This 207-nucleotide RNA was probed chemically with 2A3.

[RMDB]
RNA sequence: GGGAACGACUCGAGUAGAGUCGAAAAUGUCUUAAAACAACAAACAUCUAUUAUAUCACAGUUUCUGUAGAUCAGGAGUUUGAGAAUGGCUUAGCUGGUGGUUUUUCAUGAAGCUGCAGUUGAGAUGUUGGCUAGGCCUGUUCUCACGGAAAGGCUACUCCCAGCAAUAUUUCGAUAUUGCUGGGAGAAAAGAAACAACAACAACAAC
Reactivity to 2A3 in 0.01 (KOAc 150mM, MgCl2 10mM, bicine 150mM(pH8.5), 24C), signal-to-noise 1, nucleotides 027 to 156: u050g020u030c050u030u060a000a140a020a010c120a030a000c040a030a120a000c020a050u030c060u150a170u180u140a140u120a080u110c030a050c000a090g060u000u040u030c060u050g020u050a030g020a120u070c020a060g000g120a090g000u040u210u210g040a030g030a000a020u020g010g040c000u010u000a030g000c000u010g160g020u070g010g010u020u000u020u200u270c100a110u180g040a060a050g000c000u030g040c070a060g020u120u200g090a060g000a080u170g070u300u070g020g000c020u030a000g000g070c000c020u000g000u010u000c000u020c000a000c000g010g100a100a100a060g030g000c000u050a030
2A3 adducts were read by reverse transcription with SuperScript II with manganese. The RNA was probed in 150 mM KOAc, 10 mM MgCl2 and 150 mM bicine (pH 8.5) at 24 C.